[RMDB]
RNA sequence: GGGAACGACUCGAGUAGAGUCGAAAAAAGGCACAUCGUUUAAUUCCUCGACAGGUAACGCAUCAAAGUCAGCUCUUAAUGCAAUGGUAGGUCCUGUGCCCAAGCCUUUAAAUGUGGCUUUGAUACCAGCACUCGAGACGUUCGCGUCUCGAGUGCUAAAAGAAACAACAACAACAAC
Reactivity to 2A3 in 0.01 (KOAc 150mM, MgCl2 10mM, bicine 150mM(pH8.5), 24C), signal-to-noise 1, nucleotides 027 to 126: a000a000g050g040c110a060c060a110u220c000g010u020u110u290a090a060u060u080c000c000u000c050g000a000c020a000g170g000u120a070a000c000g000c000a000u000c000a000a000a000g000u020c020a020g070c040u000c090u090u170a090a000u300g060c110a000a150u050g050g000u000a020g000g000u050c010c010u000g040u090g020c060c000c000a000a160g020c000c000u160u010u000a230a300a190u200g000u040g000g000c000u040u000u000g050a070u070a020c000c070

This 177-nucleotide RNA was probed chemically with 2A3. The reactions ran in a buffer of 150 mM KOAc, 10 mM MgCl2 and 150 mM bicine (pH 8.5), at 24 C. Values cover nucleotides 27 to 126.